[RMDB]
RNA sequence: GGGAACGACUCGAGUAGAGUCGAAAAUGUUGGUGACAUACUUGCUCAACAAGGUCAGCUAUAUCAUAAUAUCGAUAUUGUAGACGGCUUUGACAGACGUGACAUCCGGCUCAAAUCUUUCACCAUAAAAGGUGAACGAAAUGGGCGGCCUGUUAACCAUAGAAUCACGGUUCGCCGUGAUUCUAUGAAAAGAAACAACAACAACAAC
Reactivity to DMS in 0.01 (KOAc 150mM, MgCl2 10mM, bicine 150mM(pH8.5), 24C), signal-to-noise 2, nucleotides 027 to 156: u010g030u000u000g020g030u010g020a080c050a080u020a160c080u010u000g000c080u000c010a070a140c030a020a090g020g050u000c010a300g000c000u000a050u000a040u020c060a160u000a100a190u000a190u010c110g020a080u010a030u000u000g050u000a100g000a040c100g030g030c030u000u010u000g030a120c070a150g020a100c090g010u000g000a070c030a060u000c010c000g030g000c000u000c000a000a020a300u000c020u010u000u010c010a020c000c000a070u000a130a070a170a280g000g020u010g000a010a000c060g000a020a000a270u000g000g020g000c000g070g000c000c010u020g020u000u000a040a100c100
Reactivity to 2A3 in 0.01 (KOAc 150mM, MgCl2 10mM, bicine 150mM(pH8.5), 24C), signal-to-noise 3, nucleotides 027 to 156: u120g000u030u040g030g000u050g030a040c030a050u110a060c050u080u160g030c030u030c070a040a060c020a040a040g020g000u010c020a020g000c020u050a040u010a010u040c030a050u050a300a080u140a140u260c060g020a010u010a010u060u050g030u040a060g080a150c090g020g000c000u060u020u050g070a070c090a050g050a040c030g020u040g010a010c010a030u040c010c010g160g010c010u000c010a010a020a030u000c000u000u010u000c000a010c000c000a020u200a180a150a040a060g000g010u000g010a000a000c020g010a010a000a010u010g000g010g010c000g000g010c000c020u040g030u020u070a070a040c020